[RMDB]
RNA sequence: GGGAACGACUCGAGUAGAGUCGAAAAGUUGAAGUGUUCGCACUUCAACAAACGCUCAACUCAUGGAGCGCAAGACGAAUAGCUACAUAUUGGACAUGAGAAAAAGACUGUAGUUCGCUACAGUCAAGAACGACAAGAGGUUCGCCUCUUGUCGUUCAAAAGAAACAACAACAACAAC
Reactivity to DMS in 0.01 (KOAc 150mM, MgCl2 10mM, bicine 150mM(pH8.5), 24C), signal-to-noise 1, nucleotides 027 to 126: g010u000u000g000a000a010g010u000g010u000u000c290g020c010a000c010u000u000c050a010a010c000a020a140a150c060g000c010u010c000a090a070c010u010c000a030u000g000g000a010g050c020g020c110a040a030g030a070c130g000a100a010u000a020g000c110u010a070c160a120u010a030u000u020g010g030a110c010a010u010g020a010g000a070a050a140a070a110g010a030c010u000g000u000a010g030u000u000c260g010c000u010a000c000a000g000u060c000a030a010
Reactivity to 2A3 in 0.01 (KOAc 150mM, MgCl2 10mM, bicine 150mM(pH8.5), 24C), signal-to-noise 1, nucleotides 027 to 126: g000u000u010g000a000a000g000u010g010u050u150c130g050c050a000c000u000u000c000a000a000c000a040a000a000c030g000c000u010c010a030a040c020u000c010a020u010g000g000a010g020c000g020c120a100a000g080a070c060g120a120a050u070a090g050c050u160a120c070a220u180a140u120u190g090g030a010c000a020u020g010a020g030a060a030a000a000a000g010a000c000u010g000u000a000g010u000u010c160g010c070u000a000c000a000g000u000c000a000a010
An RNA of 177 nucleotides, treated with DMS and 2A3 and read out base by base.
For 2A3 the reverse transcriptase was SuperScript II with manganese.
It was measured as part of the RMDB library M2PK50.
DMS adducts were read by reverse transcription with MarathonRT.